[RMDB]
RNA sequence: GGGAACGACUCGAGUAGAGUCGAAAACAUGCAGAUUCGUCUGCAUGAAAAAAUCCUAAGUCGACGCGCGAAACGUGGUGGAGACAUGUCGGAAACGACAACAGCUCCAUACACGGAGCGUCGAUAUGGAAAAAAGGUGCACGUUCGCGUGCACCAACUCGAGAGUUUUGUUCGCAAAACUCUCGAGAAAAGAAACAACAACAACAAC
Reactivity to 2A3 in 0.01 (KOAc 150mM, MgCl2 10mM, bicine 150mM(pH8.5), 24C), signal-to-noise 1, nucleotides 027 to 156: c000a000u010g000c000a000g030a030u050u080c130g210u010c100u000g070c020a000u010g000a010a020a000a000a010a000u050c030c020u090a180a030g010u000c010g000a000c000g040c010g030c070g180a130a080a060c000g100u000g010g030u010g010g050a010g020a030c070a150u020g010u000c010g020g040a140a050a110c020g020a000c000a030a020c110a030g010c000u010c010c010a020u100a110c000a000c000g000g000a040g010c000g040u000c000g000a000u000a010u050g000g120a060a080a030a050a020a020g000g030u020g000c030a000c030g030u090u060c300g030c000g110u050g000c000a000c080c000a010a070